[RMDB]
RNA sequence: GGGAACGACUCGAGUAGAGUCGAAAAGAUUCCUCGUUGUUGAGCGAGGUUUAAACAAAUCGACCACACAAACGUAGAGCCGACUACGGAUUUAUAAAUUAAGGCAUUAAGAGUGAUAAGGAGACAAAAAACGAUGUUGUGUUCGCACAACAUCGAAGUAAAUCGUGACGUUCGCGUCACGAUUUACAAAAGAAACAACAACAACAAC
Reactivity to 2A3 in 0.01 (KOAc 150mM, MgCl2 10mM, bicine 150mM(pH8.5), 24C), signal-to-noise 2, nucleotides 027 to 156: g080a110u180u150c000c000u000c000g000u000u070g010u010u020g010a000g010c000g020a010g000g000u000u090u060a030a030a010c040a000a000a000u030c010g020a050c050c000a040c000a010c000a120a230a000c000g000u010a000g000a000g020c000c060g090a020c010u020a010c020g000g000a000u030u270u050a130u240a080a030a030u130u130a000a000g000g000c000a000u040u130a050a010g020a000g050u030g020a020u000a170a020g050g000a070g060a060c120a040a160a050a010a020a010c000g000a010u020g000u000u000g010u000g000u040u030c210g040c020a000c010a000a000c000a000u000c000g000a020a000
Reactivity to DMS in 0.01 (KOAc 150mM, MgCl2 10mM, bicine 150mM(pH8.5), 24C), signal-to-noise 2, nucleotides 027 to 156: g000a300u010u020c010c000u000c050g010u010u000g000u000u000g010a110g060c050g030a140g040g000u000u000u000a130a080a060c070a040a120a100u000c030g010a160c010c030a180c090a300c100a050a060a100c030g000u000a050g030a140g030c070c020g020a120c020u000a120c010g010g010a190u000u000u000a040u000a100a060a090u000u000a050a120g020g000c040a210u000u000a050a070g000a170g010u010g030a100u000a020a090g010g040a300g010a060c040a030a050a050a090a080a250c020g060a000u000g000u000u000g040u000g010u000u000c290g010c000a000c030a000a000c000a020u000c000g030a020a100
The data come from the RNA Mapping Database (RMDB), library M2RFPK.
This 207-nucleotide RNA was probed chemically with 2A3 and DMS.
The RNA was probed in 150 mM KOAc, 10 mM MgCl2 and 150 mM bicine (pH 8.5) at 24 C.
Values cover nucleotides 27 to 156.